[RMDB]
RNA sequence: GGGAACGACUCGAGUAGAGUCGAAAAGAAGAUUACGGAAACUGCAUCUGCACAUAAUAUUACUUAUACACAGACUUAACUAUUUCCAAAGCCAAGAGGAAGUCUGUAUGCACAGCUCUUGGAGUCAACUACAAUUGGCUAUGUCAGCUCCUGCUAAAGUAGUAAUCGCUUUCGAGCGAUUACUACUAAAAGAAACAACAACAACAAC
Reactivity to 2A3 in 0.01 (KOAc 150mM, MgCl2 10mM, bicine 150mM(pH8.5), 24C), signal-to-noise 1, nucleotides 027 to 156: g070a060a020g050a050u080u100a050c040g070g060a000a030a000c030u050g020c010a020u080c090u060g050c030a040c040a050u060a000a110u060a160u220u160a040c060u110u130a090u100a170c030a010c020a050g060a020c030u090u110a200a090c030u110a190u060u140u080c050c000a000a070a090g020c000c020a030a000g000a000g010g070a010a060g020u000c020u000g040u020a020u110g050c030a020c040a130g050c020u000c010u000u030g000g000a000g020u020c020a000a030c000u200a080c060a030a240u030u030g000g020c010u000a010u050g090u060c020a020g000c020u020c000c000u030g080c020u060a120a150